RNA sequence: GGGAACGACUCGAGUAGAGUCGAAAAAGUGCCCUAUUCGGAGCACUGCAGUUCCCGAUAGAAAGGCUAAGCACCUCGCAAUGAGGUAAGGUGGGACUUUUCCUUCUGGAACCAAGCGGUUGGUUCCGGCCUAUUACAGGUUCGCCUGUAAUAGGCCAAAAGAAACAACAACAACAAC
Reactivity to 2A3 in 0.01 (KOAc 150mM, MgCl2 10mM, bicine 150mM(pH8.5), 24C), signal-to-noise 1, nucleotides 027 to 126: a000g070u050g020c070c000c000u080a300u080u300c110g010g020a090g060c020a010c030u040g000c060a020g020u000u010c050c000c000g000a030u060a080g110a000a030a020g040g000c070u110a060a000g050c030a010c000c000u020c040g070c120a170a270u280g010a050g020g010u030a000a020g090g000u010g030g050g000a020c010u020u050u010u040c020c000u070u090c040u020g000g010a010a000c010c000a010a070g140c070g270g090u020u070g010g000u040u020c000c000
Reactivity to DMS in 0.01 (KOAc 150mM, MgCl2 10mM, bicine 150mM(pH8.5), 24C), signal-to-noise 2, nucleotides 027 to 126: a010g030u000g000c010c020c010u020a220u000u010c180g040g030a080g000c010a010c000u000g000c170a120g000u010u000c000c010c000g020a110u010a040g030a020a050a040g000g010c010u000a120a150g020c050a060c010c000u000c020g010c120a150a110u000g010a030g010g000u000a030a030g010g010u010g010g010g010a110c050u010u000u010u000c010c060u010u000c080u000g000g000a000a000c010c010a000a040g010c170g010g000u000u000g000g010u010u000c000c020